[RMDB]
Conditions: 150 mM KOAc, 10 mM MgCl2 and 150 mM bicine (pH 8.5), 24 C. Chemical mapping of a 177-nucleotide RNA with 2A3 and DMS.
RNA sequence: GGGAACGACUCGAGUAGAGUCGAAAAUUACUUGGUCAUUUUGCCCACAAGGGAAGUCUGUGUAUGUCAUCUGGGAUUAAAACUCCUAAAAGAUGGGAACUGAUGGUGUCUAACACAACCUUUGUUAGACCCAUGUGUAAUUCGUUACACAUGGGUCAAAAGAAACAACAACAACAAC
Reactivity to 2A3 in 0.01 (KOAc 150mM, MgCl2 10mM, bicine 150mM(pH8.5), 24C), signal-to-noise 3, nucleotides 027 to 126: u060u010a040c040u060u100g070g000u030c010a070u050u100u090u150g050c010c000c010a040c000a020a020g060g000g030a080a040g050u040c060u040g050u010g020u040a050u110g080u010c010a010u010c050u070g030g010g000a020u000u050a010a040a030a050c040u010c000c010u050a170a160a010a030g080a050u120g000g020g050a080a040c030u090g030a070u070g020g000u020g010u000c010u070a110a000c020a010c000a030a060c000c020u030u000u000g040u010u030a020
Reactivity to DMS in 0.01 (KOAc 150mM, MgCl2 10mM, bicine 150mM(pH8.5), 24C), signal-to-noise 3, nucleotides 027 to 126: u000u020a050c060u000u000g020g010u010c050a130u000u000u010u020g010c010c010c020a090c050a020a060g010g000g000a200a110g020u000c100u000g010u010g000u000a060u000g020u000c010a020u000c040u000g020g000g000a040u000u000a080a080a110a150c300u000c010c000u000a050a070a100a060g010a050u000g000g010g020a100a060c040u010g000a090u000g010g000u000g010u000c040u010a110a060c040a020c070a060a130c040c050u010u030u000g010u000u000a100